[RMDB]
RNA sequence: GGGAACGACUCGAGUAGAGUCGAAAAGUAGCCAGGGCCUGGAGCCGGAUGCUGAGAACGAGGCCUGCAACUCAUUUCCCCAUUAAACAUUCUGAGAACAUCUGCACCGGUUUCCAAGGCUUCUCCCCAUAGCUACGGUGUUCGCACCGUAGCUAUGAAAAGAAACAACAACAACAAC
Reactivity to DMS in 0.01 (KOAc 150mM, MgCl2 10mM, bicine 150mM(pH8.5), 24C), signal-to-noise 1, nucleotides 027 to 126: g040u000a080g020c070c100a200g000g020g000c040c040u000g020g020a020g010c000c000g000g000a100u000g020c000u040g020a090g000a030a090c090g000a160g000g000c010c010u010g020c100a070a010c030u000c080a120u000u000u000c000c000c000c250a020u010u010a070a070a120c180a080u010u020c020u000g020a220g010a100a120c110a060u000c050u000g000c010a050c060c000g000g010u000u000u000c000c060a110a060g010g000c000u000u000c070u020c000c000c010
Chemical mapping of a 177-nucleotide RNA with DMS.
For DMS, 636 sequencing reads were counted.
The RNA was probed in 150 mM KOAc, 10 mM MgCl2 and 150 mM bicine (pH 8.5) at 24 C.